[RMDB]
The record gives the reactivity of an RNA of 177 nucleotides to 2A3 and DMS. The reactions ran in a buffer of 150 mM KOAc, 10 mM MgCl2 and 150 mM bicine (pH 8.5), at 24 C. The DMS profile rests on 958 reads.

RNA sequence: GGGAACGACUCGAGUAGAGUCGAAAAUAACGGACUAGGAAACUCGAUCUUUUAAGUGGUAAUCCUAGGGAAUCCACGGCGAGGAAACUAGGACACUAACCAUGUGAUCCCGGACGCUAGAAGAAAAGCCAUGACAAAUAUUCGUAUUUGUCAUGGCAAAAGAAACAACAACAACAAC
Reactivity to 2A3 in 0.01 (KOAc 150mM, MgCl2 10mM, bicine 150mM(pH8.5), 24C), signal-to-noise 1, nucleotides 027 to 126: u110a070a020c080g030g050a000c010u000a000g000g160a060a100a120c030u020c060g080a210u040c170u080u300u070u160a210a040g040u040g000g000u010a050a060u010c030c000u030a100g080g000g000a000a050u000c000c000a020c030g080g000c030g000a040g020g000a010a080a000c020u020a030g010g000a010c040a000c040u060a030a030c000c010a000u070g000u040g070a080u010c030c000c000g000g000a030c050g020c090u110a060g050a140a000g060a010a290a050a030
Reactivity to DMS in 0.01 (KOAc 150mM, MgCl2 10mM, bicine 150mM(pH8.5), 24C), signal-to-noise 2, nucleotides 027 to 126: u000a080a140c190g000g000a120c000u000a040g020g000a060a170a240c000u000c000g000a080u000c060u000u010u000u010a070a150g010u000g010g000u000a110a060u000c020c030u000a100g030g010g010a140a180u000c000c010a050c080g010g010c030g040a070g010g000a130a110a050c030u000a070g000g000a040c040a020c070u000a020a150c120c110a100u000g000u000g000a060u000c020c020c000g000g010a080c100g000c030u000a010g000a130a050g000a040a060a100a090